An RNA of 177 nucleotides, treated with 2A3 and read out base by base. The RNA was probed in 150 mM KOAc, 10 mM MgCl2 and 150 mM bicine (pH 8.5) at 24 C. Reactivities are rounded to 0.1 and cut off at 0 and 3. The data come from the RNA Mapping Database (RMDB), library OK1LIB.

[RMDB]
RNA sequence: GGGAACGACUCGAGUAGAGUCGAAAAGAAUUCGCCCGGUCGGCCAUCCCAAACCCCGCCGACUGGUACGGCACGCGCAUUGGCCCGACUGGCAUCCCAUGCGCACCGACGCCGGGCCCGCGCCCGAAGAGUGCAUGGGGUUCGCCCCAUGCACUCUAAAAGAAACAACAACAACAAC
Reactivity to 2A3 in 0.01 (KOAc 150mM, MgCl2 10mM, bicine 150mM(pH8.5), 24C), signal-to-noise 2, nucleotides 027 to 126: g080a030a130u170u080c030g060c000c040c000g000g000u030c000g000g050c000c080a130u070c010c040c040a020a130a150c070c030c010c080g000c000c010g020a030c030u060g020g020u030a100c020g010g020c070a030c110g000c010g000c050a020u040u170g010g000c000c000c070g130a170c150u070g040g000c000a050u100c000c000c000a000u040g020c040g020c000a000c010c030g090a070c100g030c030c010g000g000g000c010c040c040g070c030g000c000c040c000g000a060